Chemical mapping of a 207-nucleotide RNA with DMS and 2A3.
RNA sequence: GGGAACGACUCGAGUAGAGUCGAAAACUCAACGAUUCGUCGUUGAGGCGCGGUAUGCAGGCAAAAACUCUGUAAUUUGGUCAGAUCAGAAAUGAAGCAGCCAUAUCAGAACCUUUUGGGUUGCAUACCUAUUCGUAUUUGGCCAUUCGUGGCCAAAACUCCACAAUAUAUUCGUAUAUUGUGGAGUAAAAGAAACAACAACAACAAC
Reactivity to DMS in 0.01 (KOAc 150mM, MgCl2 10mM, bicine 150mM(pH8.5), 24C), signal-to-noise 3, nucleotides 027 to 156: c000u010c000a010a030c010g000a030u000u010c280g010u000c000g050u000u000g000a020g000g000c050g000c100g020g050u000a020u000g000c000a030g020g000c000a020a020a040a060a090c050u000c010u010g010u010a090a190u010u000u010g020g010u000c020a300g000a190u000c010a050g010a190a130a160u010g000a010a070g000c000a300g010c000c020a050u000a140u000c020a050g010a050a070c060c050u000u010u000u000g010g020g020u000u000g020c010a020u000a020c020c010u000a090u000u000c060g010u010a240u000u000u000g000g010c000c000a090u000u000c230g020u000g020g000c000c010a000a000a030
Reactivity to 2A3 in 0.01 (KOAc 150mM, MgCl2 10mM, bicine 150mM(pH8.5), 24C), signal-to-noise 6, nucleotides 027 to 156: c000u000c000a010a000c000g010a010u060u070c200g040u000c000g000u130u010g000a010g010g020c110g000c040g010g000u000a000u000g000c000a000g020g030c000a000a010a020a020a050c040u010c010u020g060u140a090a300u050u050u030g010g010u140c000a010g000a020u000c000a000g100a080a100a090u040g000a020a000g000c000a000g000c000c000a020u010a040u110c000a000g040a090a100c050c040u050u020u010u010g260g050g020u140u000g070c000a000u000a010c000c000u030a110u020u120c030g010u040a100u070u030u020g010g000c010c000a020u050u050c230g100u070g000g000c000c000a000a000a010
For DMS the reverse transcriptase was MarathonRT.
The RNA was probed in 150 mM KOAc, 10 mM MgCl2 and 150 mM bicine (pH 8.5) at 24 C.